The record gives the reactivity of an RNA of 177 nucleotides to 2A3 and DMS. For DMS, 1,540 sequencing reads were counted. The reactions ran in a buffer of 150 mM KOAc, 10 mM MgCl2 and 150 mM bicine (pH 8.5), at 24 C. For DMS the reverse transcriptase was MarathonRT.

RNA sequence: GGGAACGACUCGAGUAGAGUCGAAAAAGGACAAGCCUCUUCUGGCAAGCAAUUGUAAAUCUUUCUGCGAUCGAUGAAGCCACAGUAAGUUUCACGCGUGGUCAAAAGUUUGGCGAAAAACAAUACAAUGCACUCAGGUAUUCGUACCUGAGUGCAUAAAAGAAACAACAACAACAAC
Reactivity to 2A3 in 0.01 (KOAc 150mM, MgCl2 10mM, bicine 150mM(pH8.5), 24C), signal-to-noise 2, nucleotides 027 to 126: a010g140g010a040c060a020a000g020c020c000u000c010u110u000c010u010g000g060c030a060a000g000c000a000a110u010u150g100u120a080a060a110u110c050u020u040u020c000u070g050c000g050a060u060c000g100a100u040g050a070a000g060c030c010a030c000a020g010u180a230a020g000u000u050u050c030a000c000g000c030g020u000g020g010u010c000a000a080a000a050g020u010u120u120g070g000c060g110a010a000a000a280a000c060a000a000u090a040c050a040
Reactivity to DMS in 0.01 (KOAc 150mM, MgCl2 10mM, bicine 150mM(pH8.5), 24C), signal-to-noise 2, nucleotides 027 to 126: a060g020g000a040c010a150a200g010c030c000u000c040u000u000c010u000g000g000c000a160a090g000c090a150a060u010u000g050u000a010a010a070u010c060u010u000u000c000u010g000c000g000a000u020c120g020a110u000g020a120a120g000c000c000a070c120a100g000u000a120a030g010u020u000u020c040a030c090g000c090g030u000g040g020u000c070a040a070a030a150g010u000u060u000g000g060c090g010a060a100a060a100a060c200a020a010u040a070c290a010